[RMDB]
RNA sequence: GGGAACGACUCGAGUAGAGUCGAAAAAGUAUCGGGUUCGCCCGAUACUGUUGGCGCGCGGCCAUUGUCCUGUCGCGCGUAUAUUGCGCGCGAUAUACGCGCAUGUGGGGUCGUUCGCGACCCCAAAAACACUUAUAGGGUUCGCCCUAUAAGUGUUAAAAGAAACAACAACAACAAC
Reactivity to DMS in 0.01 (KOAc 150mM, MgCl2 10mM, bicine 150mM(pH8.5), 24C), signal-to-noise 3, nucleotides 027 to 126: a020g000u000a000u000c000g010g010g010u000u010c260g010c000c000c000g010a010u000a000c000u000g010u000u010g010g000c020g010c020g010c020g000g010c060c060a080u010u010g000u000c030c030u000g010u000c080g010c000g010c000g020u000a010u010a050u000u000g000c000g010c020g010c010g010a050u000a030u000a050c010g010c000g020c010a090u010g020u010g020g010g010g020u000c010g020u000u010c170g010c010g010a030c000c000c000c000a000a010a050
Reactivity to 2A3 in 0.01 (KOAc 150mM, MgCl2 10mM, bicine 150mM(pH8.5), 24C), signal-to-noise 1, nucleotides 027 to 126: a000g000u000a000u000c000g010g020g000u040u070c140g050c050c010c010g000a000u000a000c000u000g020u030u050g070g020c010g010c010g000c030g020g100c060c020a040u020u120g070u060c010c010u050g020u090c040g020c010g000c000g020u000a030u010a000u010u140g000c000g030c000g010c000g010a010u010a000u010a040c040g020c010g070c050a020u130g080u090g110g030g050g000u010c020g000u070u040c090g010c010g100a020c000c000c010c000a030a000a000

Structure probing data (DMS and 2A3) for a 177-nucleotide construct. 2A3 adducts were read by reverse transcription with SuperScript II with manganese. For DMS the reverse transcriptase was MarathonRT. It was measured as part of the RMDB library M2PK50.